[RMDB]
RNA sequence: GGGAACGACUCGAGUAGAGUCGAAAAGUUUAGGUGUGGCGAUGGGCAACAGCGCUGAUGCCAUCAAACAACGGGCCGAUCUGGUGAUUGCCGAUAACGAACAACCGGGUAUUGCUGCGGUUAUCCGCAGCGUUGGGUACUUCGGUACCCAACGCUGAAAAGAAACAACAACAACAAC
Reactivity to DMS in 0.01 (KOAc 150mM, MgCl2 10mM, bicine 150mM(pH8.5), 24C), signal-to-noise 6, nucleotides 027 to 126: g010u010u000u010a060g020g010u000g040u000g010g000c020g010a110u000g000g010g030c060a090a110c130a100g000c060g010c050u000g020a170u010g010c010c020a060u000c100a060a080a050c110a070a110c110g000g000g020c040c060g000a070u010c030u000g000g020u010g000a100u010u000g020c040c020g010a070u000a070a110c070g010a060a070c110a120a060c060c030g000g000g000u000a090u010u000g010c030u000g010c060g000g000u000u010a070u010c020c040g010
Reactivity to 2A3 in 0.01 (KOAc 150mM, MgCl2 10mM, bicine 150mM(pH8.5), 24C), signal-to-noise 4, nucleotides 027 to 126: g010u060u070u100a070g020g010u050g010u040g120g000c060g030a060u080g050g050g000c020a120a070c030a170g010c080g020c110u040g040a050u140g020c000c020a020u080c030a030a080a010c040a040a020c030g020g040g000c030c040g030a070u020c050u090g010g040u050g060a170u050u080g060c020c000g050a060u070a140a060c090g040a060a030c020a040a000c040c010g030g020g030u050a070u100u240g020c040u100g060c010g060g010u050u080a050u080c010c010g000
An RNA of 177 nucleotides, treated with DMS and 2A3 and read out base by base.
For 2A3 the reverse transcriptase was SuperScript II with manganese.
Source: RMDB library OK2TRN, as collected in RNAgym.
Reactivities are given for positions 27 through 126.
The RNA was probed in 150 mM KOAc, 10 mM MgCl2 and 150 mM bicine (pH 8.5) at 24 C.
The DMS profile rests on 7,548 reads.